[RMDB]
RNA sequence: GGGAACGACUCGAGUAGAGUCGAAAAUUUGCACUCAUCGGGGAAGGGUGAGAACCUUCGACUAAGGUUCGAUUCGAGCGAAAGCGAGAGAGCGUUGCCACAGGCAACGGCCCGAAGGUGAGGAGCGGAACCGCAUGUAUUUCGAUACAUGCGGUUCAAAAGAAACAACAACAACAAC
Reactivity to 2A3 in 0.01 (KOAc 150mM, MgCl2 10mM, bicine 150mM(pH8.5), 24C), signal-to-noise 6, nucleotides 027 to 126: u090u060u200g010c000a010c010u000c010a010u020c000g050g000g040g120a130a070g050g040g000u040g030a080g010a000a010c000c000u050u060c110g180a120c060u110a030a000g000g010u010u000c010g020a040u030u090c010g010a010g000c020g010a080a030a000g000c020g000a020g000a010g000a010g070c020g000u000u000g000c030c000a300c130a240g020g000c000a000a000c000g000g020c000c000c000g020a040a010g000g010u010g000a010g000g000a020g000c020g020
Reactivity to DMS in 0.01 (KOAc 150mM, MgCl2 10mM, bicine 150mM(pH8.5), 24C), signal-to-noise 5, nucleotides 027 to 126: u010u050u060g000c010a250c030u000c010a010u000c000g000g040g030g010a170a190g010g000g030u000g000a140g000a030a020c000c010u000u000c300g030a170c200u030a040a020g020g000u020u020c010g000a210u010u010c020g000a300g010c010g010a100a070a150g000c010g010a220g000a050g000a110g000c030g000u000u000g010c000c010a140c260a120g020g000c010a000a000c020g000g000c000c000c020g000a100a220g010g020u010g000a030g000g000a110g020c030g030